[RMDB]
RNA sequence: GGGAACGACUCGAGUAGAGUCGAAAAUAUGCAAUGCCCCUCAACUUCAAAGUGCAACCGGCAGGAGAAUGGAAUUGCACACUGGACUUCUUCUUGAUCCAAGAGUCACAACACAUUAUACUCCAUCGUCUCCAUAAGGAUUCGUCCUUAUGGAGACAAAAGAAACAACAACAACAAC
Reactivity to DMS in 0.01 (KOAc 150mM, MgCl2 10mM, bicine 150mM(pH8.5), 24C), signal-to-noise 2, nucleotides 027 to 126: u010a090u000g050c080a050a090u000g010c060c020c030c110u000c060a040a080c140u010u010c100a090a060a090g010u000g010c050a050a050c020c010g000g000c050a120g000g000a050g000a110a030u000g000g030a080a110u000u000g000c050a040c040a110c130u010g010g000a060c050u000u000c020u000u020c050u000u010g010a070u020c120c130a050a110g010a000g000u000c010a050c070a040a030c090a030c120a100u000u000a080u000a140c060u000c020c010a120u010c150
Reactivity to 2A3 in 0.01 (KOAc 150mM, MgCl2 10mM, bicine 150mM(pH8.5), 24C), signal-to-noise 2, nucleotides 027 to 126: u270a090u120g060c050a160a060u210g020c000c000c000c000u040c020a030a030c030u170u100c050a120a060a040g040u000g000c000a030a020c010c040g060g000c070a080g000g030a030g040a090a080u080g000g060a020a110u040u040g000c010a040c020a030c040u040g040g020a020c010u090u000c000u030u000c010u100u220g050a060u020c010c010a050a000g020a000g020u020c030a030c020a170a020c040a030c000a050u110u120a090u160a220c000u000c010c010a030u060c040